The data come from the RNA Mapping Database (RMDB), library OK3TST.
The record gives the reactivity of an RNA of 207 nucleotides to 2A3.
The reactions ran in a buffer of 150 mM KOAc, 10 mM MgCl2 and 150 mM bicine (pH 8.5), at 24 C.

[RMDB]
RNA sequence: GGGAACGACUCGAGUAGAGUCGAAAAGGCUCGGUCAACAGGCCGCCCCCAACCGCCCUAACUACAUUGGCUUUAGAGAUAAUUUCAUAGGGCUCAUGUAUUAUAACAGCAAUGGCAAUAUGGGGGUACUGGCAGGACAAUCAUCUCAACUUAAUGCGUCAAUUCGCAAAUUCGUUUGCGAAUUGACAAAAGAAACAACAACAACAAC
Reactivity to 2A3 in 0.01 (KOAc 150mM, MgCl2 10mM, bicine 150mM(pH8.5), 24C), signal-to-noise 1, nucleotides 027 to 156: g040g000c000u040c110g030g060u030c030a080a030c030a080g070g000c060c000g030c100c020c000c010c000a050a030c090c060g000c030c010c010u090a090a060c040u030a000c010a020u020u060g010g000c000u070u020u010a110g030a020g010a130u060a170a220u190u140u000c040a040u090a090g000g000g000c000u010c000a000u000g060u020a040u130u060a060u090a200a130c100a020g050c070a090a070u060g000g000c000a020a000u100a150u210g000g000g020g000g020u010a040c010u000g010g060c010a030g000g050a100c050a030a100u050c000a030u000c010u000c060a100a160c020u120u220a060a060u250g080c050